[RMDB]
RNA sequence: GGGAACGACUCGAGUAGAGUCGAAAACACAGCUUCGGCUGUGAAACUGACCUAUGAAUUGACAGCCAGUGCUCUUGUCUCCCUCUGGCUGCCAAUUCCAUAGGUCAAAAAGCAUUCUUCGGAAUGCGGGUGUAAAAAGGUUCGCCUUUUUACACCCAAAAGAAACAACAACAACAAC
Reactivity to DMS in 0.01 (KOAc 150mM, MgCl2 10mM, bicine 150mM(pH8.5), 24C), signal-to-noise 2, nucleotides 027 to 126: c000a000c000a010g010c010u000u010c220g060g010c000u000g000u010g000a030a060a120c140u010g010a000c010c000u000a020u000g000a010a010u000u000g020a040c000a020g010c000c000a000g000u000g020c090u020c090u010u010g010u000c080u010c020c020c000u010c000u000g000g010c010u010g020c000c010a010a020u000u010c100c070a000u000a010g000g010u000c000a010a030a050a070a090g000c010a000u000u000c000u010u010c200g020g010a030a000u000g000c000
Reactivity to 2A3 in 0.01 (KOAc 150mM, MgCl2 10mM, bicine 150mM(pH8.5), 24C), signal-to-noise 2, nucleotides 027 to 126: c010a010c000a000g000c010u040u150c230g200g000c000u020g000u000g020a050a000a000c060u020g020a000c000c000u010a000u020g010a010a000u010u000g000a010c000a000g010c020c000a030g010u050g080c030u080c120u290u190g130u170c100u100c110c000c010u030c010u000g000g030c000u010g000c000c000a000a000u010u000c020c000a000u000a000g000g000u000c000a010a010a000a000a040g000c000a010u000u010c010u020u060c180g110g000a000a000u010g000c020